[RMDB]
RNA sequence: GGGAACGACUCGAGUAGAGUCGAAAAAGCCAUACCAUUACGAUGGUAUGGCAAGUCCGUGACGGCGAUGGAUCCCGCCUGGCCGAUGCCGAACUGCCGAUCUGGCUGAUGGAUCCUGCCCCGUCAAAAAACGUAAAGCACUUCGGUGCUUUACGAACACUUCUAUAAUGUUCGCAUUAUAGAAGUGAAAAGAAACAACAACAACAAC
Reactivity to 2A3 in 0.01 (KOAc 150mM, MgCl2 10mM, bicine 150mM(pH8.5), 24C), signal-to-noise 7, nucleotides 027 to 156: a000g000c000c000a000u000a000c000c000a000u050u050a050c250g110a030u010g010g000u010a000u000g000g000c000a000a010g020u000c010c010g030u050g000a010c000g000g030c110g040a020u050g000g010a000u010c000c010c000g030c010c030u030g010g000c010c010g050a060u150g080c050c050g170a210a130c120u150g020c020c010g030a040u050c050u070g010g000c040u060g030a150u150g010g000a000u000c000c000u020g020c010c010c000c000g000u000c000a070a010a010a050a000a020c000g000u000a000a000a000g000c000a000c000u030u100c220g090g000u000g000c000u000u000u000a000c000g000a010a000
Reactivity to DMS in 0.01 (KOAc 150mM, MgCl2 10mM, bicine 150mM(pH8.5), 24C), signal-to-noise 3, nucleotides 027 to 156: a160g010c010c000a010u010a010c000c000a010u000u010a110c270g030a180u000g010g010u000a000u000g000g000c000a000a000g010u000c030c020g030u010g020a040c020g010g030c070g030a240u000g010g000a050u010c010c010c070g020c010c000u010g020g020c000c010g010a100u000g010c050c030g020a130a140c070u020g010c030c010g010a070u010c020u010g040g000c010u010g020a170u010g020g000a040u000c010c000u000g010c050c110c000c000g000u000c010a000a030a060a060a090a120c020g020u000a000a000a020g000c000a010c010u000u010c300g040g020u000g000c000u000u000u000a010c020g010a030a130